[RMDB]
RNA sequence: GGGAACGACUCGAGUAGAGUCGAAAACCCCCCCGACCCUCGGAUGGGCCGCUUCCGGCAGGGAAGCCCGAAGGUGGGAGAGGGGGAGAACACUUCGAGAGUUGGGGGAUAGAAAGAGGGCGAAUUUACAGUAAUGGCUUCGGCCAUUACAAAAGAAACAACAACAACAAC
Reactivity to 2A3 in 0.01 (KOAc 150mM, MgCl2 10mM, bicine 150mM(pH8.5), 24C), signal-to-noise 6, nucleotides 027 to 129: c020c000c000c000c000c030c000g040a040c010c020c010u010c010g040g010a080u060g060g040g000c050c030g040c030u070u030c030c010g060g060c050a060g080g020g040a010a010g000c010c000c010g060a080a020g090g020u080g000g050g000a080g040a020g020g020g000g020g010a010g010a030a010c070a020c030u080u060c030g030a030g000a000g030u050u040g000g000g000g000g010a030u050a060g080a020a040a000g050a020g010g010g000c040g050a060a070u130u070u080a110c080a020
Reactivity to DMS in 0.01 (KOAc 150mM, MgCl2 10mM, bicine 150mM(pH8.5), 24C), signal-to-noise 5, nucleotides 027 to 129: c050c010c000c020c020c010c010g020a170c000c000c000u000c000g050g010a130u000g000g040g030c030c090g000c160u020u010c000c000g060g090c180a160g000g000g000a030a060g000c120c040c050g020a140a130g040g040u080g010g040g010a050g020a070g000g000g000g000g000a060g010a000a000c120a100c100u030u030c100g030a060g040a080g040u030u040g010g000g000g000g010a060u030a000g030a000a000a000g030a040g010g000g010c000g000a000a070u050u050u060a100c200a120
Notes
This 170-nucleotide RNA was probed chemically with 2A3 and DMS. Reactivities are rounded to 0.1 and cut off at 0 and 3. It was measured as part of the RMDB library 15KLIB.